Chemical mapping of a 177-nucleotide RNA with DMS. The reactions ran in a buffer of 150 mM KOAc, 10 mM MgCl2 and 150 mM bicine (pH 8.5), at 24 C.

[RMDB]
RNA sequence: GGGAACGACUCGAGUAGAGUCGAAAAGAUAUGGAAGCGAAGUGGAUCAGAUAGAGUUCGAGGAUCUACACGUGUCGGAAACGACAUGUAGGGAGAACCUAUCUGAUCCACUUCGCUUCCUAAGUCAGUAGUAAUCUUAGUUCGCUAAGAUUACUACAAAAGAAACAACAACAACAAC
Reactivity to DMS in 0.01 (KOAc 150mM, MgCl2 10mM, bicine 150mM(pH8.5), 24C), signal-to-noise 4, nucleotides 027 to 126: g000a050u000a300u000g000g010a020a010g000c010g000a030a010g040u000g000g000a010u010c000a010g010a000u000a000g010a180g020u000u000c000g010a100g000g010a040u020c000u000a010c020a040c260g020u000g000u000c000g010g000a090a090a230c000g010a010c000a040u000g010u000a010g000g000g000a030g000a020a000c000c000u000a010u000c000u000g000a000u010c000c000a000c000u000u000c010g010c010u000u000c000c000u000a010a070g000u000c040a180